[RMDB]
RNA sequence: GGGAACGACUCGAGUAGAGUCGAAAAGGGGUCGUCAGCACUCGUUGUUGACGCGCAAUGAACUACAGCUGAAGCCUCCACGGCUGCAUUGCGCGAAGGACGAGGCUGACGACGGAGGCACCCAAAACAAAUCGGAUACUUCGGUAUCCGAUUUGAACGAGGUCUAUACGUUCGCGUAUAGACCUCGAAAAGAAACAACAACAACAAC
Reactivity to 2A3 in 0.01 (KOAc 150mM, MgCl2 10mM, bicine 150mM(pH8.5), 24C), signal-to-noise 2, nucleotides 027 to 156: g060g010g020g000u010c000g000u000c000a000g000c040a130c210u010c040g010u000u030g200u180u300g260a100c010g010c020g000c000a000a000u030g050a080a060c110u240a180c260a030g000c010u010g010a040a010g010c010c000u000c000c000a030c080g010g000c000u050g140c010a010u010u010g000c040g000c000g040a100a090g260g010a000c000g000a000g010g000c000u000g000a000c000g000a000c040g000g000a000g000g000c000a010c020c000c000a030a110a000a000c010a000a000a000u000c000g010g000a000u000a000c000u040u070c220g110g000u000a000u000c000c000g000a000u000u000u010g000a030a000
Conditions: 150 mM KOAc, 10 mM MgCl2 and 150 mM bicine (pH 8.5), 24 C. Structure probing data (2A3) for a 207-nucleotide construct. 2A3 adducts were read by reverse transcription with SuperScript II with manganese. The 2A3 profile rests on 1,877 reads.